[RMDB]
An RNA of 177 nucleotides, treated with 2A3 and DMS and read out base by base.

RNA sequence: GGGAACGACUCGAGUAGAGUCGAAAAUGAUAGAACAAUGUAGAUAAGGGAAGUCGGCAAAAUAGAUCCGUAACUUCGGGAAAAGGAUUGGCUCUAAGGGUCGGGCGCGUUGGGCCUUGGGGGAAAGAAAGUACGGGAGAUUCGUCUCCCGUACUUUAAAAGAAACAACAACAACAAC
Reactivity to 2A3 in 0.01 (KOAc 150mM, MgCl2 10mM, bicine 150mM(pH8.5), 24C), signal-to-noise 1, nucleotides 027 to 126: u210g040a090u140a050g040a160a000c120a130a050u160g030u120a040g040a140u020a070a050g090g000g000a010a000g040u040c000g070g000c020a000a000a260a000u020a000g100a200u010c000c000g100u100a020a020c080u030u000c020g000g030g010a090a090a000a000g030g000a030u050u210g020g000c030u000c000u030a010a100g030g000g000u060c030g000g030g000c000g000c080g010u010u030g050g000g020c000c000u040u000g010g000g000g000g000a000a000a000g040
Reactivity to DMS in 0.01 (KOAc 150mM, MgCl2 10mM, bicine 150mM(pH8.5), 24C), signal-to-noise 2, nucleotides 027 to 126: u010g030a190u010a040g030a110a080c070a050a060u000g000u020a060g010a060u010a100a120g000g000g010a060a070g010u010c030g000g030c100a050a050a090a140u050a070g030a070u020c030c010g010u010a050a150c060u000u000c070g020g010g000a060a030a080a140g000g000a030u010u030g000g000c020u000c030u010a060a120g000g000g030u000c060g000g000g020c070g020c130g000u010u030g000g010g000c040c040u010u000g050g000g010g000g020a080a010a060g000
The DMS profile rests on 3,100 reads. Conditions: 150 mM KOAc, 10 mM MgCl2 and 150 mM bicine (pH 8.5), 24 C.